[RMDB]
RNA sequence: GGGAACGACUCGAGUAGAGUCGAAAAGAUAUGGAUGAAAGUUCUUGGAUUUAGGGUCGAUCGGAAACGAUCGAGCCCUUGUCAGAACUGUCCUAAGUCAAAACUAGCGUUCUUCGGAACGCUAGAAGGUACGAUAGAAGUUCGCUUCUAUCGUACCAAAAGAAACAACAACAACAAC
Reactivity to 2A3 in 0.01 (KOAc 150mM, MgCl2 10mM, bicine 150mM(pH8.5), 24C), signal-to-noise 4, nucleotides 027 to 126: g030a020u080a030u130g010g010a030u050g160a130a210a160g010u010u020c040u150u250g300g040a190u300u300u300a020g000g000g030u050c000g010a000u000c010g000g000a030a010a030c010g000a000u010c000g000a030g030c000c020c000u010u070g020u000c000a000g000a000a010c010u000g000u000c000c000u050a150a040g030u030c050a030a000a110a200c020u010a000g000c000g010u010u000c000u020u040c250g140g000a010a010c000g000c010u000a000g020a000a010
Reactivity to DMS in 0.01 (KOAc 150mM, MgCl2 10mM, bicine 150mM(pH8.5), 24C), signal-to-noise 4, nucleotides 027 to 126: g010a040u010a280u000g000g010a030u000g010a110a070a020g010u000u000c000u000u010g020g010a030u010u010u010a010g010g010g010u000c000g010a010u010c010g000g010a090a080a170c010g000a010u000c000g010a050g020c000c000c000u010u000g010u000c020a020g010a010a010c000u000g000u000c000c010u010a040a180g000u000c020a070a100a110a190c000u000a000g000c000g020u000u000c000u000u020c230g020g000a020a000c000g010c000u000a000g000a020a060
Annotation: The record gives the reactivity of an RNA of 177 nucleotides to 2A3 and DMS. 2A3 adducts were read by reverse transcription with SuperScript II with manganese. For DMS, 6,136 sequencing reads were counted.